[RMDB]
Record summary:
The data come from the RNA Mapping Database (RMDB), library OK1LIB. The record gives the reactivity of an RNA of 177 nucleotides to 2A3 and DMS. The RNA was probed in 150 mM KOAc, 10 mM MgCl2 and 150 mM bicine (pH 8.5) at 24 C. Reactivities are rounded to 0.1 and cut off at 0 and 3. For 2A3, 1,532 sequencing reads were counted.

RNA sequence: GGGAACGACUCGAGUAGAGUCGAAAAAGCCGCACGUGUCGUUGAAGAUGCAAGUCGUGAGAUACAGAGUGUGGGAAGGGGACUAGGGACCGUGCAAGACCGACAAGACCGUCUUCAACAAGAACUGCACUUUUACGGCAUUCGUGCCGUAAAAGUGAAAAGAAACAACAACAACAAC
Reactivity to 2A3 in 0.01 (KOAc 150mM, MgCl2 10mM, bicine 150mM(pH8.5), 24C), signal-to-noise 3, nucleotides 027 to 126: a000g190c130c040g170c010a030c020g090u050g050u130c130g020u000u010g010a010a010g000a000u070g000c080a040a090g000u020c040g070u020g120a140g000a000u170a060c030a010g280a080g090u060g050u120g110g030g000a080a020g040g050g030g050a000c010u050a110g020g060g010a000c000c000g000u020g050c100a080a000g010a150c020c010g000a030c000a000a100g080a050c000c080g010u110c020u030u010c010a020a020c000a010a000g110a070a040c050u050g030
Reactivity to DMS in 0.01 (KOAc 150mM, MgCl2 10mM, bicine 150mM(pH8.5), 24C), signal-to-noise 2, nucleotides 027 to 126: a050g060c070c050g010c000a110c070g000u000g000u020c070g000u000u000g000a090a000g010a010u000g010c090a110a080g030u000c050g000u040g000a080g000a060u090a090c110a070g000a160g040u000g030u010g000g020g000a100a090g000g000g000g000a120c150u000a050g000g000g000a070c110c030g020u060g000c070a030a080g000a100c110c000g000a000c020a000a200g010a040c290c020g000u030c000u010u030c050a070a040c050a150a030g040a040a050c120u030g000